[RMDB]
The record gives the reactivity of an RNA of 207 nucleotides to 2A3 and DMS. The data come from the RNA Mapping Database (RMDB), library M2RFPK. For 2A3, 7,592 sequencing reads were counted.
RNA sequence: GGGAACGACUCGAGUAGAGUCGAAAAUAAGCAAAAGACAACCACCUUUCCCGCUGACAAUAGCGUUAUCCCUCUGCACUUCGGUAAUAUGAGGGCACAGUAAAUCCUGCAAGGAUGAGAAUGUGAUUAAACAGUUACAGCUUCGGCUGUAACUGAACAUUGUGUAAUACUUCGGUAUUACACAAUGAAAAGAAACAACAACAACAAC
Reactivity to 2A3 in 0.01 (KOAc 150mM, MgCl2 10mM, bicine 150mM(pH8.5), 24C), signal-to-noise 8, nucleotides 027 to 156: u150a010a020g050c050a060a070a070a020g120a080c050a060a040c060c040a070c030c040u030u060u040c020c010c010g000c040u040g050a070c070a150a140u100a120g040c030g070u120u120a100u120c000c010c000u000c010u020g010c040a020c030u060u070c180g090g000u040a040a040u110a090u300g000a010g000g000g000c000a000c000a000g000u010a020a020a020u010c000c000u110g220c150a140a100g010g000a010u020g010a000g010a030a010u020g000u000g010a030u070u250a090a110a030c000a010g000u000u000a000c000a010g000c000u040u070c160g120g000c000u010g000u000a000a000c000u000g010a020a010
Reactivity to DMS in 0.01 (KOAc 150mM, MgCl2 10mM, bicine 150mM(pH8.5), 24C), signal-to-noise 5, nucleotides 027 to 156: u000a090a110g050c060a060a050a090a090g020a180c040a110a090c040c020a140c070c020u000u000u000c010c020c030g000c060u020g020a150c140a100a110u000a060g020c060g010u010u010a070u000c000c010c010u000c000u000g010c080a040c040u000u010c160g030g030u000a060a140u000a100u010g000a040g030g010g030c050a010c050a060g000u000a060a150a050u000c000c000u010g030c170a120a150g040g020a020u000g000a090g010a070a130u000g030u010g000a150u000u000a070a080a150c010a010g010u000u000a010c000a010g000c000u000u010c300g040g010c010u010g010u010a000a000c000u000g000a030a120